The record gives the reactivity of an RNA of 177 nucleotides to DMS. The DMS profile rests on 2,240 reads.
[RMDB]
RNA sequence: GGGAACGACUCGAGUAGAGUCGAAAAGAUAUGGAAACACAAGCUUUUGACGAUAGGUUAAGACGAGCGAGUAUCGGAAACGAUACCGCUCGUCUUAACCUAUCGAUAAGCUUGGUUUCCUAAGUCACCAAUAAUAGUCCUUCGGGACUAUUAUUGGAAAAGAAACAACAACAACAAC
Reactivity to DMS in 0.01 (KOAc 150mM, MgCl2 10mM, bicine 150mM(pH8.5), 24C), signal-to-noise 2, nucleotides 027 to 126: g000a070u000a300u000g020g000a010a030a010c000a140c000a020a010g010c010u000u000u010u000g000a240c240g010a010u000a000g000g010u000u000a010a010g030a030c000g020a020g060c000g010a150g010u000a000u000c020g020g000a160a090a150c020g000a000u020a010c010c000g000c010u000c010g000u010c010u000u000a010a000c000c000u000a000u010c010g000a040u000a010a020g010c010u000u000g010g000u000u000u000c000c000u000a030a060g020u010c050a270